Chemical mapping of a 207-nucleotide RNA with 2A3 and DMS.
RNA sequence: GGGAACGACUCGAGUAGAGUCGAAAACCCAUUCCAUUCGUGGAAUGGGCCAGGGAGACCCAUGGAGAGUCUCCAGAGGUUCCUAAGGCCUCGAUCGCGCCUGCCGGGAGGCAGAAUGUCCCGGUUCUCCUAAUCCUUCAAGGUUCGCCUUGAAGGACGAAUUAUCUCCUUUCGAGGAGAUAAUUCGAAAAGAAACAACAACAACAAC
Reactivity to 2A3 in 0.01 (KOAc 150mM, MgCl2 10mM, bicine 150mM(pH8.5), 24C), signal-to-noise 4, nucleotides 027 to 156: c000c000c000a000u000u000c000c000a020u040u060c130g100u040g000g000a000a010u000g000g000g020c020c030a110g010g030g000a000g000a010c010c010c030a030u070g000g000a020g000a000g000u010c000u000c000c010a020g010a000g000g020u120u220c070c080u180a070a100g080g000c010c010u030c020g040a090u140c080g050c050g000c140c010u010g000c000c000g010g000g010a010g030g000c030a040g210a160a090u100g030u040c010c000c000g010g000u010u000c000u000c000c000u000a010a030u000c000c000u000u000c000a010a010g040g020u020u050c150g100c060c000u000u000g000a000a000g000g000a000
Reactivity to DMS in 0.01 (KOAc 150mM, MgCl2 10mM, bicine 150mM(pH8.5), 24C), signal-to-noise 1, nucleotides 027 to 156: c000c000c000a010u020u000c010c000a100u000u000c280g050u010g000g010a030a010u000g000g020g020c000c040a070g000g020g010a040g020a010c010c030c020a130u000g030g010a070g000a030g020u000c020u000c020c000a040g000a040g070g030u000u000c120c140u000a180a150g010g010c000c020u000c020g000a020u010c060g010c140g040c030c010u000g000c000c000g010g000g050a080g010g000c030a150g000a090a110u000g010u000c010c000c010g020g010u000u000c030u000c020c000u000a140a270u000c000c000u000u030c000a040a050g010g030u000u000c300g010c040c020u000u000g000a040a010g020g020a010
For DMS, 3,458 sequencing reads were counted. For 2A3, 4,197 sequencing reads were counted.